[RMDB]
RNA sequence: GGGAACGACUCGAGUAGAGUCGAAAAGAUAUGGACUAACAUGGCCGAGCUGAUGACAGGACUAUAGAAUCGGAAACGAUUCUACGAAUCCUGGCCCAGCGUUUGACGCCAUGUUAGUCCUAAGUCAGAAUUCGCUAAACUUCGGUUUAGCGAAUUCAAAAGAAACAACAACAACAAC
Reactivity to DMS in 0.01 (KOAc 150mM, MgCl2 10mM, bicine 150mM(pH8.5), 24C), signal-to-noise 1, nucleotides 027 to 126: g000a030u000a300u000g000g020a000c000u000a000a000c000a000u000g010g030c010c040g000a080g000c000u000g030a130u000g000a060c000a000g010g000a050c090u010a180u010a010g010a030a000u000c000g000g000a110a080a130c010g020a000u000u000c000u000a000c060g000a070a140u000c000c000u000g010g010c040c220c010a000g000c020g030u000u010u030g020a090c300g010c000c000a000u000g010u000u000a000g000u000c000c000u000a000a030g000u000c040a110
This 177-nucleotide RNA was probed chemically with DMS. Source: RMDB library TTRINS, as collected in RNAgym. Values are in units of 0.01, from 0 to 300, in steps of 10.